[RMDB]
RNA sequence: GGGAACGACUCGAGUAGAGUCGAAAACGCGUGUUUCACUCUGGAGGUAGAGCUACUGGAUGGCCGAUGGGCCCCACAAGGUUACUGACGUCAGCCAAACUCCGAAUGCCAGAGUGUGAGAGCGCGGCUCCAUUGAGUGCUUCGGCACUCAAUGGAGAAAAGAAACAACAACAACAAC
Reactivity to DMS in 0.01 (KOAc 150mM, MgCl2 10mM, bicine 150mM(pH8.5), 24C), signal-to-noise 2, nucleotides 027 to 126: c090g000c000g000u000g000u000u010u000c000a000c020u000c000u000g000g000a050g000g000u040a150g040a020g000c120u010a130c280u000g000g000a030u000g020g030c000c020g000a090u020g000g000g000c070c010c000c150a200c300a090a130g060g000u050u000a170c000u000g000a300c300g020u000c020a000g000c000c000a020a040a300c000u000c000c030g000a070a020u300g000c000c000a000g000a000g010u000g030u000g000a030g030a000g000c010g090c030g000g000
Reactivity to 2A3 in 0.01 (KOAc 150mM, MgCl2 10mM, bicine 150mM(pH8.5), 24C), signal-to-noise 3, nucleotides 027 to 126: c010g010c010g000u050g080u090u300u040c010a020c010u000c010u000g010g000a010g020g010u110a010g010a010g000c020u110a040c050u030g000g000a030u020g000g030c000c000g000a000u000g020g000g000c000c000c000c060a220c040a070a030g070g040u000u160a300c000u010g000a020c000g000u010c000a020g000c020c000a040a150a270c030u000c010c010g030a080a030u030g030c000c020a000g000a000g030u000g010u020g020a050g000a000g000c020g000c000g010g010